[RMDB]
RNA sequence: GGGAACGACUCGAGUAGAGUCGAAAAUACGCACACAAGUUGAUUUAGCUAAAGAAGUCUUUUCUAUACCAGUAGAUAUUGCCUCACAACCUUUAGCCACUACUCUCAUAGGAGAACUUGCAAGCUACACGCUGAUUACUUUCGAGUAAUCAGCGUGAAAAGAAACAACAACAACAAC
Reactivity to 2A3 in 0.01 (KOAc 150mM, MgCl2 10mM, bicine 150mM(pH8.5), 24C), signal-to-noise 5, nucleotides 027 to 126: u080a020c060g000c020a020c000a000c010a110a060g010u010u040g110a160u090u040u210a050g000c030u090a060a090a090g050a080a040g050u030c050u020u060u010u010c010u010a030u020a080c030c030a010g040u020a010g050a040u090a050u120u170g010c040c010u080c030a080c030a040a100c040c000u080u060u050a030g000c000c000a060c050u100a050c000u020c000u000c040a070u120a040g090g030a020g030a030a030c020u010u040g010c060a080a020g000c010u010a000
Reactivity to DMS in 0.01 (KOAc 150mM, MgCl2 10mM, bicine 150mM(pH8.5), 24C), signal-to-noise 2, nucleotides 027 to 126: u060a030c130g020c010a080c220a080c080a070a010g000u000u000g020a130u000u000u000a120g060c010u000a080a040a090g000a060a100g000u000c000u000u000u010u000c000u010a010u000a040c090c140a130g000u040a000g000a110u010a090u000u030g000c000c050u030c100a010c100a100a010c200c040u040u000u050a060g070c000c100a100c020u000a130c000u000c050u000c250a130u020a030g120g010a010g010a080a110c010u000u000g000c060a010a070g000c020u000a080

Conditions: 150 mM KOAc, 10 mM MgCl2 and 150 mM bicine (pH 8.5), 24 C.
The record gives the reactivity of an RNA of 177 nucleotides to 2A3 and DMS.
Values are in units of 0.01, from 0 to 300, in steps of 10.
For 2A3 the reverse transcriptase was SuperScript II with manganese.